Structure probing data (DMS and 2A3) for a 177-nucleotide construct. The reactions ran in a buffer of 150 mM KOAc, 10 mM MgCl2 and 150 mM bicine (pH 8.5), at 24 C. 2A3 adducts were read by reverse transcription with SuperScript II with manganese.

RNA sequence: GGGAACGACUCGAGUAGAGUCGAAAAGGCGUACAAAUCUUGCCCAAGGCAUUUCCCUGGACGUAAGCGAUGAUCCGAAAGGUAGCGACCAAAUGAGUAUGGAACAGGGCCAACUUCUGCCUGCAGCCAACGCUUGCAAUUUCGAUUGCAAGCGUUGAAAAGAAACAACAACAACAAC
Reactivity to DMS in 0.01 (KOAc 150mM, MgCl2 10mM, bicine 150mM(pH8.5), 24C), signal-to-noise 4, nucleotides 027 to 126: g000g030c050g010u000a060c100a070a080a030u030c090u020u000g010c010c020c020a130a110g010g020c040a050u010u010u000c020c000c020u000g000g010a100c070g020u000a060a160g000c010g000a060u010g000a070u010c030c020g000a060a110a080g000g000u010a060g010c030g020a120c020c060a030a100a040u050g000a130g010u000a030u000g000g010a130a090c060a070g010g000g000c300c100a040a050c100u010u000c130u000g010c030c010u000g030c130a160g000c160
Reactivity to 2A3 in 0.01 (KOAc 150mM, MgCl2 10mM, bicine 150mM(pH8.5), 24C), signal-to-noise 5, nucleotides 027 to 126: g050g000c030g040u090a020c080a060a200a040u030c020u070u090g010c010c010c000a030a040g040g000c020a030u050u050u090c000c000c000u000g020g030a020c060g020u060a090a070g030c030g070a120u020g040a040u060c010c000g030a050a030a010g040g030u020a020g010c020g020a030c030c010a050a040a080u220g030a070g080u090a110u140g060g020a050a040c020a030g030g000g040c010c030a040a020c010u070u040c020u030g010c000c010u030g040c020a010g040c020